RNA sequence: GGGAACGACUCGAGUAGAGUCGAAAAGUGCGACAUUUCGAUGUCGCACAAACCCAAAUGGUGGCACCUAACUAUACAAGCCGGGAAAAGCCAGAUGCCAACGUCCUUAGCCCUUCGGGGCUAAGAAUGAUGAUUAUAACUUCGGUUAUAAUCAUCAAAAAGAAACAACAACAACAAC
Reactivity to 2A3 in 0.01 (KOAc 150mM, MgCl2 10mM, bicine 150mM(pH8.5), 24C), signal-to-noise 6, nucleotides 027 to 126: g000u010g000c000g000a010c000a010u050u050u110c210g110a010u010g000u000c010g020c000a000c000a000a000a000c010c000c000a030a070a020u140g020g010u010g000g010c020a130c090c010u050a090a060c030u070a060u090a300c080a100a030g040c060c050g030g010g010a070a140a020a000g020c030c010a030g010a100u120g020c020c010a040a040c050g060u080c010c010u000u010a000g000c000c000c000u010u040c200g030g000g000g000c000u000a000a000g000a010a040
Reactivity to DMS in 0.01 (KOAc 150mM, MgCl2 10mM, bicine 150mM(pH8.5), 24C), signal-to-noise 6, nucleotides 027 to 126: g010u000g000c010g010a010c010a010u000u000u010c190g010a020u000g000u000c000g010c010a000c000a000a080a120c000c000c000a110a090a070u010g020g010u000g000g010c050a060c010c010u000a050a070c050u000a090u010a120c110a090a100g020c080c060g000g010g010a060a090a110a100g010c020c040a030g000a050u000g000c020c030a030a050c090g010u000c110c000u000u000a000g010c000c000c000u000u010c190g010g000g000g010c010u000a000a000g000a080a070